Chemical mapping of a 177-nucleotide RNA with 2A3 and DMS.
The DMS profile rests on 11,389 reads.
The RNA was probed in 150 mM KOAc, 10 mM MgCl2 and 150 mM bicine (pH 8.5) at 24 C.
RNA sequence: GGGAACGACUCGAGUAGAGUCGAAAACGCUGUAGUAUCCUGUGGCGAGGCGGUUGCCCCAGGCGUCGUACUGGGUGAAGGGGACGUAGAGGAACUUGCCUGCAGCGCCGAUGCCGAGGUCGUCGAAACUAUCUGCGUAAUUCGUUACGCAGAUAGUAAAAGAAACAACAACAACAAC
Reactivity to 2A3 in 0.01 (KOAc 150mM, MgCl2 10mM, bicine 150mM(pH8.5), 24C), signal-to-noise 7, nucleotides 027 to 126: c030g000c060u070g050u140a060g030u040a150u180c010c020u090g060u090g080g000c030g010a030g010g020c020g090g020u090u070g120c000c000c000c000a030g090g030c030g200u140c050g040u170a040c020u040g060g040g070u170g170a100a040g010g010g010g010a020c060g060u080a050g030a070g190g040a050a050c020u070u190g040c000c010u010g010c010a010g010c000g000c010c010g040a060u140g000c010c000g010a020g020g030u050c030g020u020c020g030a080a030
Reactivity to DMS in 0.01 (KOAc 150mM, MgCl2 10mM, bicine 150mM(pH8.5), 24C), signal-to-noise 7, nucleotides 027 to 126: c140g010c070u010g010u000a080g010u010a090u010c020c020u000g020u020g010g010c020g020a170g010g010c030g010g010u000u000g010c040c010c000c010a040g010g000c040g010u000c200g020u010a080c010u000g000g010g030u000g010a130a080g010g010g010g020a130c050g030u000a080g010a150g010g000a080a110c050u000u000g010c030c010u000g020c040a060g020c020g000c030c020g000a160u010g010c030c020g000a080g010g000u000c070g010u000c040g000a130a100
Background: It was measured as part of the RMDB library OK2TST. DMS adducts were read by reverse transcription with MarathonRT.